Source: RMDB library M2RFPK, as collected in RNAgym. Structure probing data (DMS and 2A3) for a 207-nucleotide construct. The reactions ran in a buffer of 150 mM KOAc, 10 mM MgCl2 and 150 mM bicine (pH 8.5), at 24 C. For 2A3, 1,585 sequencing reads were counted.
[RMDB]
RNA sequence: GGGAACGACUCGAGUAGAGUCGAAAACGCACUCGCAGCUUAAUAAUCUGCGCUGAGCCCUUCUCCCCCAGCUUGCCUGUGUCCUAGGGAAUUGGAAGGUCAUCCUUCACAGGAUCGUGUGGAAGUCAUUACUCGUGAGUGUUCGCACUCACGAGAAGAAGAUUAUAGACUUCGGUCUAUAAUCUUCAAAAGAAACAACAACAACAAC
Reactivity to DMS in 0.01 (KOAc 150mM, MgCl2 10mM, bicine 150mM(pH8.5), 24C), signal-to-noise 2, nucleotides 027 to 156: c060g020c050a080c040u010c000g010c040a020g010c090u010u000a120a150u000a100a120u000c030u010g000c010g000c180u000g000a070g020c020c010c020u010u010c040u000c050c000c020c030c020a060g030c020u000u000g000c040c020u010g000u000g000u020c090c040u020a140g030g020g010a080a130u020u000g020g030a060a060g020g000u000c070a080u000c020c010u000u000c050a090c090a110g010g000a060u000c080g020u000g050u000g010g010a080a210g000u000c050a110u000u000a120c010u000c010g050u000g010a010g050u000g000u010u000c300g030c000a030c000u000c000a010c000g020a000g000a010a090
Reactivity to 2A3 in 0.01 (KOAc 150mM, MgCl2 10mM, bicine 150mM(pH8.5), 24C), signal-to-noise 2, nucleotides 027 to 156: c040g010c010a080c030u030c010g010c000a000g010c020u110u030a120a010u070a100a050u120c000u020g010c000g070c140u060g010a010g030c010c000c010u120u080c100u050c010c000c000c000c010a000g000c020u000u120g070c000c020u020g010u010g010u060c020c030u050a020g010g000g090a030a090u090u030g070g020a040a060g060g020u050c020a070u060c020c000u080u060c020a010c010a010g060g010a070u040c070g040u020g000u020g080g050a000a080g050u070c030a050u030u100a140c000u000c000g000u000g000a010g000u010g010u030u050c120g020c120a000c000u000c000a000c010g010a000g000a000a010